Conditions: 150 mM KOAc, 10 mM MgCl2 and 150 mM bicine (pH 8.5), 24 C. The record gives the reactivity of an RNA of 207 nucleotides to 2A3 and DMS. High 2A3 reactivity points to a flexible backbone, as in loops and unpaired stretches.

[RMDB]
RNA sequence: GGGAACGACUCGAGUAGAGUCGAAAAACUCGUGGGAAGCGGGUCGAGGAUGCGAGGUUGUCUCGUUAACGAUCCUCGCAAAAUAUAAGUGCCAACUUAAAGCGCACUGAUCUAAGUCUUGCUGCUUAAGCGCUUAGAUCUGUCGGUAUAGGGCUUGACCGUAGGUAUUCUUCGGAAUACCUACGGUAAAAGAAACAACAACAACAAC
Reactivity to 2A3 in 0.01 (KOAc 150mM, MgCl2 10mM, bicine 150mM(pH8.5), 24C), signal-to-noise 5, nucleotides 027 to 156: a000c040u030c030g010u080g010g110g080a140a000g040c020g000g000g010u010c010g000a010g040g010a020u030g010c010g000a000g010g000u080u070g060u090c010u000c030g060u060u080a040a010c020g010a030u150c000c000u000c000g000c000a020a010a020a010u200a010u030a060a050g010u040g080c030c010a080a030c180u120u150a090a040a040g080c060g000c020a010c030u020g000a000u000c000u010a000a010g050u000c100u240u200g020c010u020g020c040u170u240a110a010g010c020g000c010u010u000a000g010a010u020c000u010g020u010c020g020g030u080a080u100a170g010g010g030c030u040u080g030
Reactivity to DMS in 0.01 (KOAc 150mM, MgCl2 10mM, bicine 150mM(pH8.5), 24C), signal-to-noise 2, nucleotides 027 to 156: a070c000u000c020g020u000g010g020g000a140a110g050c000g020g000g030u000c000g000a060g010g020a300u000g030c020g020a040g000g020u060u010g030u000c010u000c100g000u010u010a030a040c050g000a060u000c010c010u000c010g000c030a100a050a090a120u010a120u010a070a050g000u000g020c010c010a080a070c100u000u020a060a090a130g010c000g020c020a050c050u000g030a020u000c010u000a000a030g000u000c060u000u000g030c000u010g030c210u000u010a090a050g010c000g000c000u010u000a010g010a040u010c000u000g000u000c020g020g010u010a090u000a120g000g000g000c050u000u000g000